Source: RMDB library TTRDEL, as collected in RNAgym. An RNA of 177 nucleotides, treated with DMS and 2A3 and read out base by base.
[RMDB]
RNA sequence: GGGAACGACUCGAGUAGAGUCGAAAAGAUAUGGACCCUGGGAGGAGCAAAGGUACAUCGGAAACGAUGUAUACUGAACUACUCCGAACAGGGUCCUAAGUCAAAGACUUUGGUUCGCCAAAGUCAACAACUACUGAUUCUUCGGAAUCAGUAGUUGAAAAGAAACAACAACAACAAC
Reactivity to DMS in 0.01 (KOAc 150mM, MgCl2 10mM, bicine 150mM(pH8.5), 24C), signal-to-noise 5, nucleotides 027 to 126: g000a040u000a300u000g000g000a010c000c010c000u000g000g000g020a300g000g000a020g020c070a030a190a050g000g010u000a000c000a000u000c000g000g010a130a070a210c000g010a010u000g000u000a010u000a050c020u000g000a140a130c100u030a090c010u000c000c000g010a300a300c010a010g010g000g000u000c010c000u000a010a070g000u010c030a120a110a090g000a020c000u000u000u000g000g000u010u010c210g010c000c000a010a010a010g010u000c000a090a130
Reactivity to 2A3 in 0.01 (KOAc 150mM, MgCl2 10mM, bicine 150mM(pH8.5), 24C), signal-to-noise 2, nucleotides 027 to 126: g010a010u050a010u100g000g000a000c000c010c000u010g030g000g010a040g020g000a020g080c160a110a020a070g020g000u010a000c000a000u000c010g020g020a040a020a020c010g000a000u000g010u000a000u030a070c000u000g010a050a020c030u280a190c060u070c010c000g000a020a000c000a000g010g000g010u000c000c000u010a000a000g000u000c000a000a030a040g010a010c000u010u000u000g070g010u070u120c260g120c080c000a020a000a000g000u010c000a010a020
About this RNA: The DMS profile rests on 4,288 reads.